[RMDB]
Chemical mapping of a 177-nucleotide RNA with DMS and 2A3. DMS adducts were read by reverse transcription with MarathonRT. Values cover nucleotides 27 to 126. For DMS, 1,784 sequencing reads were counted. 2A3 adducts were read by reverse transcription with SuperScript II with manganese.
RNA sequence: GGGAACGACUCGAGUAGAGUCGAAAACGCGCUUCGGUGCUGCGCACCUCUAUGCAAGCUUGUGAAGAAAUGGUACAAUCGCCUUGUUGUGCCAGAGGAGGACAACAAAGAUGUUGCCCGUAUUCACUCGAUGUUUUGCUUUCGAGCAAAACAUCGAAAAAGAAACAACAACAACAAC
Reactivity to DMS in 0.01 (KOAc 150mM, MgCl2 10mM, bicine 150mM(pH8.5), 24C), signal-to-noise 2, nucleotides 027 to 126: c150g000c000g020c030u030u000c100g000g040u040g000c090u060g000c070g000c040a110c070c000u030c060u000a060u020g000c000a020a130g030c050u000u000g050u040g000a000a080g000a110a160a030u010g000g020u000a020c070a000a000u100c210g030c140c160u010u000g000u000u000g000u000g010c000c000a040g010a070g000g000a260g000g020a090c000a000a100c000a100a080a200g000a100u000g000u060u030g020c020c000c000g000u080a020u010u010c040a030c010
Reactivity to 2A3 in 0.01 (KOAc 150mM, MgCl2 10mM, bicine 150mM(pH8.5), 24C), signal-to-noise 3, nucleotides 027 to 126: c050g000c000g000c010u050u070c130g070g060u070g030c070u080g000c060g000c040a050c000c010u000c060u090a090u120g020c030a050a010g020c030u160u120g020u020g000a020a050g050a010a090a070u020g000g000u010a020c060a060a060u100c070g090c030c090u140u170g010u030u000g010u000g010c020c000a010g010a020g040g070a080g010g040a030c020a060a010c020a020a070a030g170a150u250g010u030u020g040c000c000c000g040u020a070u020u020c000a000c040